The record gives the reactivity of an RNA of 177 nucleotides to 2A3 and DMS. For DMS, 4,565 sequencing reads were counted. For 2A3, 1,503 sequencing reads were counted. It was measured as part of the RMDB library OK1LIB.
RNA sequence: GGGAACGACUCGAGUAGAGUCGAAAAACUUGAAUUUAAAGCAUGUACACCGAUUGACAUCGACCAAGUUGAACCGGUAAGUGACAUUGUCAAACGCUUUAAUACAGGGGCGAUGAGUUAUGGAUCGCCCUAGCGCCUUGUUCGCAAGGCGCUAGGGAAAAGAAACAACAACAACAAC
Reactivity to 2A3 in 0.01 (KOAc 150mM, MgCl2 10mM, bicine 150mM(pH8.5), 24C), signal-to-noise 4, nucleotides 027 to 126: a000c060u090u110g020a090a090u110u040u060a080a010a000g050c030a020u130g010u110a020c050a030c020c020g030a040u030u100g070a060c050a080u060c120g050a090c100c010a120a080g010u010u010g090a030a030c030c000g050g000u090a180a040g000u100g080a060c090a160u100u300g090u180c090a070a110a060c030g000c020u030u020u100a010a020u050a110c040a010g010g070g080g000c080g040a060u070g070a050g080u120u080a060u170g060g030a030u040c020g010
Reactivity to DMS in 0.01 (KOAc 150mM, MgCl2 10mM, bicine 150mM(pH8.5), 24C), signal-to-noise 4, nucleotides 027 to 126: a100c090u020u000g000a120a060u060u020u010a060a070a060g000c010a110u000g010u030a110c110a140c060c010g020a120u000u000g010a050c010a090u020c100g030a110c110c090a050a100g020u010u010g010a030a140c100c000g000g000u000a070a040g000u000g000a020c060a160u030u030g020u020c040a040a120a090c190g000c020u000u000u000a000a020u000a120c150a060g000g000g040g000c010g010a020u000g000a160g020u020u010a110u020g000g010a030u000c020g020
For 2A3 the reverse transcriptase was SuperScript II with manganese. The reactions ran in a buffer of 150 mM KOAc, 10 mM MgCl2 and 150 mM bicine (pH 8.5), at 24 C.